[RMDB]
RNA sequence: GGGAACGACUCGAGUAGAGUCGAAAAGAGCCGACAGAGAAGUCGGGAAGCGACGAGAGAGAAUAGAAUACAUUGGAAUUCGAGAUACUGCCACAAAAUGACAGAAGUCGCCAUAUUCUCAGAGAAGCGAUAUCCCUCGAUUCGUCGAGGGAUAUCGAAAAGAAACAACAACAACAAC
Reactivity to DMS in 0.01 (KOAc 150mM, MgCl2 10mM, bicine 150mM(pH8.5), 24C), signal-to-noise 3, nucleotides 027 to 126: g020a100g000c010c000g000a030c000a180g030a170g000a140a110g000u020c020g000g000g050a090a110g000c000g010a040c020g010a120g010a210g020a120g000a100a070u000a070g000a080a070u030a070c140a130u030u020g020g020a120a070u010u000c010g000a140g010a080u010a080c020u000g000c060c000a030c140a070a000a060a270u010g030a040c000a030g000a070a100g030u000c000g010c040c140a090u000a120u010u010c000u000c010a110g020a100g000a110a160g030
Reactivity to 2A3 in 0.01 (KOAc 150mM, MgCl2 10mM, bicine 150mM(pH8.5), 24C), signal-to-noise 4, nucleotides 027 to 126: g050a000g090c000c000g000a010c010a000g230a020g090a300a040g020u020c010g000g000g000a070a000g040c020g030a030c090g000a010g020a000g000a000g040a140a020u100a060g060a110a090u150a090c100a120u050u160g030g070a070a040u080u020c040g000a010g010a050u100a100c000u000g000c010c000a050c020a070a060a040a100u110g030a000c000a030g080a130a020g040u010c000g010c000c000a030u040a040u070u000c030u000c050a010g030a000g010a160a050g050